Conditions: 150 mM KOAc, 10 mM MgCl2 and 150 mM bicine (pH 8.5), 24 C. This 177-nucleotide RNA was probed chemically with 2A3 and DMS. It was measured as part of the RMDB library OK2TRN. Values cover nucleotides 27 to 126. The 2A3 profile rests on 980 reads. For DMS the reverse transcriptase was MarathonRT.
RNA sequence: GGGAACGACUCGAGUAGAGUCGAAAAUUGGUGUUGUGAUGAUGACUGUGAUUAUCUUCUUCUCAACUCUUAUCUACUUCCUGGAAAGAGAUGAGCCAGGAACCAAGUUCACGAGUAUUCCAGCAAAGCAGCAGUAAUCAUUCGUGAUUACUGCUGCAAAAGAAACAACAACAACAAC
Reactivity to 2A3 in 0.01 (KOAc 150mM, MgCl2 10mM, bicine 150mM(pH8.5), 24C), signal-to-noise 1, nucleotides 027 to 126: u040u040g020g030u000g010u040u040g040u060g000a040u000g030a030u060g030a040c060u040g020u010g150a050u020u090a050u130c010u060u010c000u070u040c040u000c000a020a020c060u000c020u070u120a140u120c040u040a120c120u070u020c000c020u030g020g000a060a030a010g090a040g020a040u080g000a020g030c010c030a020g000g000a000a010c010c040a100a020g070u010u010c060a020c040g000a000g060u000a080u050u020c040c010a080g010c040a050a130a000
Reactivity to DMS in 0.01 (KOAc 150mM, MgCl2 10mM, bicine 150mM(pH8.5), 24C), signal-to-noise 2, nucleotides 027 to 126: u000u010g010g010u000g020u000u010g040u030g020a060u000g020a100u000g010a040c060u000g010u010g000a120u000u000a130u000c020u000u000c020u000u010c020u000c000a020a030c020u000c000u000u010a140u000c020u000a050c180u010u000c030c050u000g020g000a050a100a070g010a050g010a070u000g000a110g000c100c080a030g000g030a060a040c090c080a050a130g010u010u000c110a050c080g000a030g010u000a170u000u000c010c060a110g020c200a020a070a080